Background
This 177-nucleotide RNA was probed chemically with 2A3. Conditions: 150 mM KOAc, 10 mM MgCl2 and 150 mM bicine (pH 8.5), 24 C. The 2A3 profile rests on 323 reads. Source: RMDB library OK1LIB, as collected in RNAgym. Values are in units of 0.01, from 0 to 300, in steps of 10.
RNA sequence: GGGAACGACUCGAGUAGAGUCGAAAACGUAAAUUAUGGCUGAAUCAUCCGCUACCUUCACGCCAAUGGCGCCUCAAUAUUCUUUAUCUGCCUCUUCCUACACAUCGGGCGAGGCCUAUAUUACGGAGGGCCAUUAUCCGUUCGCGGAUAAUGGCCCAAAAGAAACAACAACAACAAC
Reactivity to 2A3 in 0.01 (KOAc 150mM, MgCl2 10mM, bicine 150mM(pH8.5), 24C), signal-to-noise 1, nucleotides 027 to 126: c030g000u010a040a040a050u110u110a130u220g000g020c000u000g040a090a160u050c000a140u030c060c010g040c080u080a160c030c000u020u020c000a000c160g000c010c040a040a000u000g000g000c000g170c050c000u000c000a100a000u050a130u300u010c050u060u160u250a140u000c090u080g000c000c010u040c000u000u060c000c000u040a010c050a000c000a130u140c000g000g000g080c040g040a140g000g000c050c000u260a270u090a130u040u000a060c010g120g040a040